[RMDB]
RNA sequence: GGGAACGACUCGAGUAGAGUCGAAAAAGAAUUGUCCUCGUGUGUUCUGAGAGAGAACAACGGGCACUACAGCGUUAUCUAGAGAAUGGCGAGAGGAAUCAUCUUCUAGUGGUGCGAGAGACAACUAUCAAGUCAUCGGGUUCGCUCGAUGGCUUGAAAAAGAAACAACAACAACAAC
Reactivity to 2A3 in 0.01 (KOAc 150mM, MgCl2 10mM, bicine 150mM(pH8.5), 24C), signal-to-noise 9, nucleotides 027 to 126: a000g140a070a090u070u040g020u030c010c000u030c030g030u170g010u010g010u050u010c010u070g080a090g010a030g010a000g000a180a000c010a010a010c000g000g030g010c030a010c050u100a040c050a040g030c010g040u050u050a060u080c030u060a030g020a010g050a240a080u060g040g010c040g020a120g010a040g150g080a080a060u090c030a050u010c040u120u000c000u020a020g010u020g040g020u040g010c020g010a040g000a010g010a050c010a040a020c030u050a040
Reactivity to DMS in 0.01 (KOAc 150mM, MgCl2 10mM, bicine 150mM(pH8.5), 24C), signal-to-noise 9, nucleotides 027 to 126: a050g000a100a120u010u010g000u000c040c000u010c010g020u020g020u010g010u000u000c000u000g000a210g010a150g010a060g000a010a000c000a040a020c020g010g000g000c040a020c030u010a040c050a190g010c020g000u000u010a030u010c040u020a120g010a120g010a110a030u000g000g010c010g010a090g010a060g000g010a070a120u040c150a070u010c040u010u000c010u000a060g020u000g000g010u000g000c010g010a070g000a120g000a030c030a010a030c150u010a130

The record gives the reactivity of an RNA of 177 nucleotides to 2A3 and DMS. For DMS, 84,821 sequencing reads were counted. Conditions: 150 mM KOAc, 10 mM MgCl2 and 150 mM bicine (pH 8.5), 24 C. High 2A3 reactivity points to a flexible backbone, as in loops and unpaired stretches. The data come from the RNA Mapping Database (RMDB), library OK1LIB. DMS adducts were read by reverse transcription with MarathonRT.